[RMDB]
Chemical mapping of a 177-nucleotide RNA with DMS and 2A3. DMS adducts were read by reverse transcription with MarathonRT. The reactions ran in a buffer of 150 mM KOAc, 10 mM MgCl2 and 150 mM bicine (pH 8.5), at 24 C. For 2A3 the reverse transcriptase was SuperScript II with manganese. It was measured as part of the RMDB library OK1LIB. Values cover nucleotides 27 to 126.
RNA sequence: GGGAACGACUCGAGUAGAGUCGAAAACUAACCGGCAUUUCUCGCUUCUGUAAACCUGCUUGCUUAACAUAUUUUCCCCUUCCCCUUGGUUCCUCAGGUACUUGAGAAAGGGGAGACACGGGAGACCGUAGUUGCUCCCUUUCGAGGGAGCAACUACAAAAGAAACAACAACAACAAC
Reactivity to DMS in 0.01 (KOAc 150mM, MgCl2 10mM, bicine 150mM(pH8.5), 24C), signal-to-noise 1, nucleotides 027 to 126: c020u000a100a100c090c010g000g000c090a120u000u000u000c020u000c020g000c000u010u000c000u000g000u000a160a040a270c030c000u010g000c020u000u000g000c070u000u030a180a020c090a150u000a090u030u020u000u000c000c000c010c070u000u040c000c000c000c240u000u000g000g040u000u050c140c010u050c000a050g020g000u000a040c070u040u000g000a000g000a060a010a060g000g030g000g000a000g010a120c040a040c230g000g000g020a130g070a040c300c050
Reactivity to 2A3 in 0.01 (KOAc 150mM, MgCl2 10mM, bicine 150mM(pH8.5), 24C), signal-to-noise 4, nucleotides 027 to 126: c040u060a050a050c010c010g040g020c060a060u110u090u020c040u040c040g080c030u070u030c040u170g160u160a100a130a160c020c010u020g030c030u110u090g030c030u110u180a070a040c090a120u180a150u150u110u080u070c000c000c000c000u020u060c010c010c000c020u050u050g140g010u160u090c010c010u110c000a010g140g050u200a170c050u130u080g010a000g030a050a000a000g000g060g000g000a000g000a000c050a000c000g000g010g000a020g020a010c010c110